[RMDB]
RNA sequence: GGGAACGACUCGAGUAGAGUCGAAAAGCUGGAGGAUCGCUUGAGUCCAGGAGUUCUGGGCUGUAGUGCGCUAUGCCGAUCGGGUGUCCGCACUAAGUUCGGCAUCAAUAUGGUGACCUCCCGGGAGCGGGGGACCACCAGGUUGCCUAAGGAGGGGCUGCGUAAAGCAGUUCGCUGCUUUACGCAGAAAAGAAACAACAACAACAAC
Reactivity to 2A3 in 0.01 (KOAc 150mM, MgCl2 10mM, bicine 150mM(pH8.5), 24C), signal-to-noise 1, nucleotides 027 to 156: g020c020u050g020g000a050g000g050a060u100c060g020c050u060u170g090a030g000u020c030c030a030g030g010a130g070u150u030c020u010g000g000g000c020u040g020u050a020g000u030g000c030g030c090u020a010u030g000c020c000g110a200u060c040g070g000g010u010g060u030c080c090g040c030a020c020u060a110a190g060u000u030c020g000g010c020a010u000c000a040a050u080a070u210g000g000u010g020a050c000c030u010c000c000c020g030g040g020a200g100c040g010g010g020g010g000a050c110c000a010c010c010a000g000g000u050u020g000c000c020u030a040a020g030g010a020g010g010g010g000